Chemical mapping of a 177-nucleotide RNA with 2A3 and DMS. Conditions: 150 mM KOAc, 10 mM MgCl2 and 150 mM bicine (pH 8.5), 24 C. It was measured as part of the RMDB library OK2TST. Values cover nucleotides 27 to 126.

[RMDB]
RNA sequence: GGGAACGACUCGAGUAGAGUCGAAAAUCUGGACCACGUCACCUUUUGACGUCGGUAGACUAGCAGUCCCACCGGUCAGAGUGCAGCUUACCCACCAAGGCCAACUUCCUGUUUACCGAUCUCAAUAAAAUCAAGGCUUUUUCGAAAGCCUUGAUUUAAAAGAAACAACAACAACAAC
Reactivity to 2A3 in 0.01 (KOAc 150mM, MgCl2 10mM, bicine 150mM(pH8.5), 24C), signal-to-noise 1, nucleotides 027 to 126: u000c010u070g090g050a010c020c000a030c030g010u010c010a090c060c110u070u140u090u130g040a020c080g000u040c060g000g000u000a050g110a070c040u050a000g060c050a010g070u020c030c030c010a040c030c030g050g000u020c020a020g070a020g030u080g040c030a020g000c050u010u130a100c020c000c020a000c020c040a080a060g060g010c020c000a000a000c040u070u010c010c000u060g050u020u070u040a020c020c000g070a110u040c000u010c050a060a080u120a120
Reactivity to DMS in 0.01 (KOAc 150mM, MgCl2 10mM, bicine 150mM(pH8.5), 24C), signal-to-noise 3, nucleotides 027 to 126: u000c040u010g010g020a090c010c030a060c030g010u000c030a090c300c210u010u000u010u000g010a020c050g020u000c070g000g000u000a050g000a110c050u010a080g000c130a120g010u000c030c010c020a120c050c050g000g020u000c080a060g020a110g040u010g020c040a060g000c070u000u000a110c040c030c010a060c090c090a090a100g030g000c010c040a060a090c060u010u000c000c020u000g000u000u000u010a090c060c050g000a060u000c140u000c020a060a080u010a050